[RMDB]
RNA sequence: GGGAACGACUCGAGUAGAGUCGAAAAGCCGAAGAGUUCGCUCUUCGGCGACGAAUUUGGCGUAGAUGAGAGUCUACAGUACAAGCCAUCCCAGAUGUACAAAUAAGCAUUGCUUCGGCAAUGCUAAGCAUAUCACUUCGUUCGCGAAGUGAUAUGCAAAAGAAACAACAACAACAAC
Reactivity to 2A3 in 0.01 (KOAc 150mM, MgCl2 10mM, bicine 150mM(pH8.5), 24C), signal-to-noise 3, nucleotides 027 to 126: g010c010c000g000a000a010g000a010g050u100u180c210g030c110u000c000u000u000c000g000g080c000g000a000c000g100a050a160u150u060u160g020g000c050g010u010a000g010a020u040g060a040g000a010g130u000c000u000a010c020a060g010u020a020c010a020a010g000c020c000a050u000c020c000c000a010g040a140u100g010u020a010c020a020a120a010u290a130a040g000c000a000u010u010g000c000u030u080c230g060g020c000a000a010u000g000c000u010a000a020
Reactivity to DMS in 0.01 (KOAc 150mM, MgCl2 10mM, bicine 150mM(pH8.5), 24C), signal-to-noise 2, nucleotides 027 to 126: g000c010c000g030a000a000g000a010g000u000u000c290g050c000u000c000u000u000c030g000g010c000g010a030c170g010a140a180u000u000u000g010g020c050g000u010a010g000a000u000g010a280g000a200g010u000c000u000a010c030a130g000u000a000c000a140a300g000c000c010a060u000c000c010c000a130g000a140u000g050u000a040c050a130a060a070u030a140a050g050c000a010u000u000g000c020u000u010c170g040g010c010a000a000u000g020c010u000a000a040
An RNA of 177 nucleotides, treated with 2A3 and DMS and read out base by base. In probing experiments dimethyl sulfate is read out at A N1 and C N3, which are open when not base-paired. The data come from the RNA Mapping Database (RMDB), library M2PK50. 2A3 adducts were read by reverse transcription with SuperScript II with manganese. Reactivities are given for positions 27 through 126. DMS adducts were read by reverse transcription with MarathonRT.